[RMDB]
RNA sequence: GGGAACGACUCGAGUAGAGUCGAAAAUAUGGCGCUGAAUUCCCUGAAGGGAAACGGGGGACCCAAUCUUCAGGGGUGAAUCCCACGUAAGUGGGUAGGGCUAGUCUCUUUCGGCCCGAACCCGUCAGCUAACCUCGUAAGCGUGGAAAGAGGGCAACUUACGACAGAUGUUCGCAUCUGUCGUAAGAAAAGAAACAACAACAACAAC
Reactivity to 2A3 in 0.01 (KOAc 150mM, MgCl2 10mM, bicine 150mM(pH8.5), 24C), signal-to-noise 3, nucleotides 027 to 156: u230a060u100g080g010c030g010c010u020g020a050a060u020u000c030c000c020u060g220a190a250g000g000g010a010a010a000c000g000g020g000g000g000a020c000c010c010a050a160u170c130u300u190c170a070g020g010g010g040u010g000a010a010u010c000c000c000a000c000g050u070a130a060g000u010g000g000g010u010a010g000g000g000c010u030a060g070u070c020u020c000u090u060u070c020g010g000c000c010c000g000a000a000c020c000c000g060u040c010a010g000c000u010a030a010c010c000u020c000g000u000a000a010g000c010g000u030g040g000a040a020a010g040a020g000g040g040c050a090a050
Reactivity to DMS in 0.01 (KOAc 150mM, MgCl2 10mM, bicine 150mM(pH8.5), 24C), signal-to-noise 2, nucleotides 027 to 156: u000a080u000g020g030c030g070c010u000g020a090a190u000u000c010c000c000u000g020a140a150g010g000g000a010a040a050c000g030g000g000g010g000a150c090c040c060a090a120u010c130u000u000c110a120g000g010g000g030u000g000a130a210u000c000c020c020a030c010g000u000a150a170g020u000g000g000g010u000a030g010g010g060c000u000a120g000u000c080u000c080u000u000u000c030g010g000c000c020c020g000a050a020c020c000c000g040u030c070a100g000c040u010a030a200c020c020u000c000g030u000a130a050g010c020g000u000g010g000a070a070a100g000a060g000g000g000c060a110a160